An RNA of 207 nucleotides, treated with 2A3 and read out base by base. The reactions ran in a buffer of 150 mM KOAc, 10 mM MgCl2 and 150 mM bicine (pH 8.5), at 24 C. For 2A3, 1,233 sequencing reads were counted.
[RMDB]
RNA sequence: GGGAACGACUCGAGUAGAGUCGAAAACGUGGGUUUCGACCCACGAAAAAACCGUAGGCAUCACUUCGCUUGGAUUUAUAGGGUCACUUCGAAAGAGGAAGUCCCUAUUGUCAGCGAACUGAUGCCUAAACGGAAAAAAACACGCUUCGGCGUGUAACGUACCCUGAUGUUUCGACAUCAGGGUACGAAAAGAAACAACAACAACAAC
Reactivity to 2A3 in 0.01 (KOAc 150mM, MgCl2 10mM, bicine 150mM(pH8.5), 24C), signal-to-noise 2, nucleotides 027 to 156: c000g000u000g000g040g020u030u210u200c170g100a120c000c020c020a020c020g050a020a000a000a000a000a010c000c000g000u000a000g000g000c000a000u000c000a000c010u000u000c000g000c020u170u290g210g010a050u200u300u060a010u070a010g050g020g010u100c070a030c010u030u010c040g240a280a180a090g130a130g130g120a050a000g100u170c000c000c000u000a000u000u000g000u000c010a000g000c000g000a000a000c040u000g000a000u000g000c000c000u000a000a010a000c010g000g070a040a000a000a060a130a000a030c030a020c000g000c000u070u060c200g120g000c000g040u040g020u070a010a000